[RMDB]
RNA sequence: GGGAACGACUCGAGUAGAGUCGAAAAGUGCCUCGUCGGCCCGGCAUGCCAACCUGAUCCGAAGUUCAAGGUGGUUUCUCUGGCCUCCCAGAGAGAUGCGCGUCGGAAGAACCGACGAACAAACCUUAAAACAAAACGACGUUCGCGUCGUUUUGAAGGUAAGAGAACAGUUCGCUGUUCUCUUACCAAAAGAAACAACAACAACAAC
Reactivity to 2A3 in 0.01 (KOAc 150mM, MgCl2 10mM, bicine 150mM(pH8.5), 24C), signal-to-noise 4, nucleotides 027 to 156: g060u030g080c020c010u020c000g010u000c000g000g040c000c000c010g000g000c020a040u130g020c010c020a070a070c010c000u010g010a030u070c040c120g260a230a090g040u060u050c050a060a030g010g000u010g000g000u010u100u000c010u010c000u000g030g000c020c060u100c040c010c000a000g000a010g000a000g000a060u130g040c050g010c030g050u030c010g000g010a090a050g020a070a110c010c000g000a000c010g010a020a000c040a010a050a040c010c020u140u250a090a100a020a040c000a010a000a010a000c000g010a010c000g030u070u060c200g000c000g080u010c000g020u010u000u000u010g000a020a010
Reactivity to DMS in 0.01 (KOAc 150mM, MgCl2 10mM, bicine 150mM(pH8.5), 24C), signal-to-noise 2, nucleotides 027 to 156: g010u000g020c060c070u010c020g060u000c000g010g040c010c000c000g020g000c010a060u010g000c000c080a090a060c000c020u000g010a090u000c040c060g010a150a220g000u010u010c040a050a040g020g030u000g000g030u000u000u000c000u000c010u000g010g020c150c080u020c160c030c010a030g010a100g000a060g020a080u010g020c030g020c030g020u010c010g020g000a090a150g010a160a080c000c010g000a020c010g000a020a020c010a080a150a100c060c010u000u010a050a080a110a160c020a000a010a010a030c000g010a020c000g020u010u000c300g060c050g050u000c000g020u000u000u000u000g010a040a090
Chemical mapping of a 207-nucleotide RNA with 2A3 and DMS.
The reactions ran in a buffer of 150 mM KOAc, 10 mM MgCl2 and 150 mM bicine (pH 8.5), at 24 C.